[RMDB]
RNA sequence: GGGAACGACUCGAGUAGAGUCGAAAAAGCGAUGAUACGUCAUCGCAACGAUUGCCUGAUCGUAAAACAGGAGACGGCCGUGGCCGCGACCACGUAAAAAACCGUAACGUGGUCUACGGACCACGAAAAAAGCGCGGAACGUUCGCGUUCCGCGCAAUCACUACCUAUGGUUCGCCAUAGGUAGUGAAAAAGAAACAACAACAACAAC
Reactivity to 2A3 in 0.01 (KOAc 150mM, MgCl2 10mM, bicine 150mM(pH8.5), 24C), signal-to-noise 1, nucleotides 027 to 156: a000g010c010g000a000u010g010a000u010a040c180g060u020c020a000u010c010g010c000a000a050c000g000a020u020u020g010c000c010u030g010a030u010c040g120u210a010a040a070a050c020a030g020g070a030g080a070c120g090g050c070c000g030u010g000g020c030c000g040c030g030a070c010c000a000c020g000u020a040a000a000a000a030a090c100c010g010u040a110a000c000g000u000g000g000u010c020u030a030c060g000g050a080c030c000a020c010g010a000a020a010a010a010a010g000c010g080c000g030g020a010a000c020g000u010u070c160g030c030g080u010u000c000c030g030c020g010c000a000a000
Annotation
Conditions: 150 mM KOAc, 10 mM MgCl2 and 150 mM bicine (pH 8.5), 24 C. Structure probing data (2A3) for a 207-nucleotide construct. Values cover nucleotides 27 to 156. 2A3 adducts were read by reverse transcription with SuperScript II with manganese. It was measured as part of the RMDB library M2RFPK.